[RMDB]
RNA sequence: GGGAACGACUCGAGUAGAGUCGAAAAGAUAUGGAUACAGACAUGCUGAUGGGUCGGAAACGACCCUACCAGCAACAGCUGUGAUCCUAAGUCAAAAGUACACAUUAGGUUCGCCUAAUGUGUACAACAAUGCCUUAGCCUUCGGGCUAAGGCAUUGAAAAGAAACAACAACAACAAC
Reactivity to DMS in 0.01 (KOAc 150mM, MgCl2 10mM, bicine 150mM(pH8.5), 24C), signal-to-noise 2, nucleotides 027 to 126: g000a050u000a300u000g010g000a000u000a030c000a010g040a070c080a200u000g030c010u000g000a070u000g000g000g010u000c000g010g000a110a040a180c010g010a010c000c000c000u000a020c060c010a000g020c030a020a030c300a130g000c000u000g000u010g000a000u000c000c010u020a040a140g000u010c020a110a080a060a160g010u000a000c000a010c010a020u000u000a000g010g010u000u000c280g010c000c000u010a000a000u050g010u000g010u000a000c000a060a090
Reactivity to 2A3 in 0.01 (KOAc 150mM, MgCl2 10mM, bicine 150mM(pH8.5), 24C), signal-to-noise 1, nucleotides 027 to 126: g020a000u080a000u080g000g000a000u010a010c010a010g110a050c030a110u060g000c000u000g020a010u040g010g000g030u000c000g000g020a090a060a070c030g000a010c000c030c000u000a030c010c000a000g000c000a020a010c040a020g060c010u020g020u140g210a030u010c010c020u000a130a010g060u050c050a010a000a000a210g000u000a010c000a010c000a010u000u010a000g000g110u040u070c300g170c070c000u020a010a000u000g000u010g000u010a000c000a010a020
This 177-nucleotide RNA was probed chemically with DMS and 2A3. The 2A3 profile rests on 2,325 reads. Conditions: 150 mM KOAc, 10 mM MgCl2 and 150 mM bicine (pH 8.5), 24 C. For DMS the reverse transcriptase was MarathonRT.